[RMDB]
RNA sequence: GGGAACGACUCGAGUAGAGUCGAAAAGCCUAACAGUUCGCUGUUAGGCAAAUGCUCAGACUUCGCAACUGUGAAAAACACAACAGAAGUGUCUAUGCGAGGAUCGUUGCGUCUUCGGACGCAACAAUACCAGAAUAAGAUUCGUCUUAUUCUGGUAAAAAGAAACAACAACAACAAC
Reactivity to 2A3 in 0.01 (KOAc 150mM, MgCl2 10mM, bicine 150mM(pH8.5), 24C), signal-to-noise 8, nucleotides 027 to 126: g000c000c000u000a000a000c000a010g060u090u100c130g060c110u000g000u010u000a000g010g000c000a020a050a000u060g000c000u000c030a040g040a140c010u020u000c010g000c030a070a110c110u070g010u100g180a120a040a020a070a010c040a010c020a100a100c050a100g160a270a040g150u040g050u050c050u120a080u060g020c010g010a010g040g020a130u120c100g010u010u000g000c000g000u000c000u020u020c180g070g000a000c010g000c000a000a000c000a000a000
Reactivity to DMS in 0.01 (KOAc 150mM, MgCl2 10mM, bicine 150mM(pH8.5), 24C), signal-to-noise 6, nucleotides 027 to 126: g010c000c000u000a000a010c000a010g010u000u020c220g040c000u000g000u000u000a000g000g010c000a010a010a030u000g000c020u000c030a160g010a140c020u000u000c010g010c020a060a190c150u010g010u000g000a060a070a070a120a100c040a030c050a080a090c220a090g000a080a110g010u000g010u000c050u010a100u000g010c020g000a020g010g000a090u000c100g010u000u000g010c000g010u000c000u000u010c170g010g010a010c000g010c000a010a000c000a080a120